[RMDB]
Structure probing data (2A3 and DMS) for a 177-nucleotide construct. The DMS profile rests on 2,443 reads. It was measured as part of the RMDB library OK2TRN. Conditions: 150 mM KOAc, 10 mM MgCl2 and 150 mM bicine (pH 8.5), 24 C. Reactivities are given for positions 27 through 126.

RNA sequence: GGGAACGACUCGAGUAGAGUCGAAAAGGCACAGAGGUGUACAUGCGCGUCUGCUUAAGCUCUCACAUUGUCUGAUUCACAGAUACGAGCUUGGGAGCGCAGACAUGUGCAUCUCAAUGGGAGUGCAGCUCUGCACACUAUUCGUAGUGUGCAGAGCAAAAGAAACAACAACAACAAC
Reactivity to 2A3 in 0.01 (KOAc 150mM, MgCl2 10mM, bicine 150mM(pH8.5), 24C), signal-to-noise 3, nucleotides 027 to 126: g070g000c010a000c020a030g020a000g000g020u000g000u030a000c010a000u010g000c000g000c000g030u130c060u080g220c000u170u040a000a000g020c010u020c000u030c010a150c030a220u180u200g020u000c010u010g070a260u240u240c140a090c020a230g000a010u060a050c040g010a010g000c000u000u010g000g000g020a000g010c010g000c010a000g020a040c000a000u000g000u010g000c000a010u000c000u000c010a000a020u020g000g030g040a150g010u020g010c010a020
Reactivity to DMS in 0.01 (KOAc 150mM, MgCl2 10mM, bicine 150mM(pH8.5), 24C), signal-to-noise 3, nucleotides 027 to 126: g010g000c010a040c000a140g010a030g000g000u000g000u000a020c020a010u000g000c070g000c040g000u000c020u000g000c010u000u000a010a030g020c000u000c000u020c290a110c270a120u020u000g010u000c010u000g010a300u010u020c300a180c010a030g010a010u000a070c300g020a020g010c010u000u000g000g000g020a050g020c010g020c010a040g010a140c010a000u000g020u010g000c000a000u000c000u000c010a100a080u010g010g010g000a080g030u000g010c020a120